[RMDB]
Description:
Chemical mapping of a 177-nucleotide RNA with DMS and 2A3. The data come from the RNA Mapping Database (RMDB), library OK1LIB.
RNA sequence: GGGAACGACUCGAGUAGAGUCGAAAAGCUCACAAAAAUGGGACGCACUUGUUACCUUGUCUUCCCAUCAGAGAUUGGGGAAAAGUAUCGUGGGGUAUAUCAGUCGGAUCCGGCCCGGUACUGGUCAAAUAGGAUCGAGUUUCGACUCGAUCCUAUUAAAAGAAACAACAACAACAAC
Reactivity to DMS in 0.01 (KOAc 150mM, MgCl2 10mM, bicine 150mM(pH8.5), 24C), signal-to-noise 4, nucleotides 027 to 126: g020c010u040c000a080c130a030a070a060a130a050u020g000g030g000a030c140g010c150a070c030u020u010g010u030u020a100c090c020u010u000g000u020c060u000u010c000c000c040a050u020c080a100g020a130g020a120u000u000g020g000g010g010a070a070a080a070g010u000a030u020c080g020u020g010g040g010g010u000a080u010a090u010c050a080g000u010c060g020g020a090u000c050c030g000g000c000c020c030g020g000u000a010c030u020g000g020u010c110a080
Reactivity to 2A3 in 0.01 (KOAc 150mM, MgCl2 10mM, bicine 150mM(pH8.5), 24C), signal-to-noise 4, nucleotides 027 to 126: g050c030u070c060a060c050a000a150a030a030a050u100g060g020g020a020c020g060c050a020c080u050u070g060u120u140a090c020c000u030u030g040u060c050u030u050c010c010c000a020u050c010a020g130a030g030a200u110u200g010g000g020g000a020a070a050a040g070u070a050u110c070g080u180g020g000g000g020u050a140u010a030u120c040a040g060u070c010g050g000a030u020c010c020g040g020c020c010c040g000g000u020a050c010u050g030g020u080c040a000
For 2A3 the reverse transcriptase was SuperScript II with manganese. The DMS profile rests on 6,131 reads.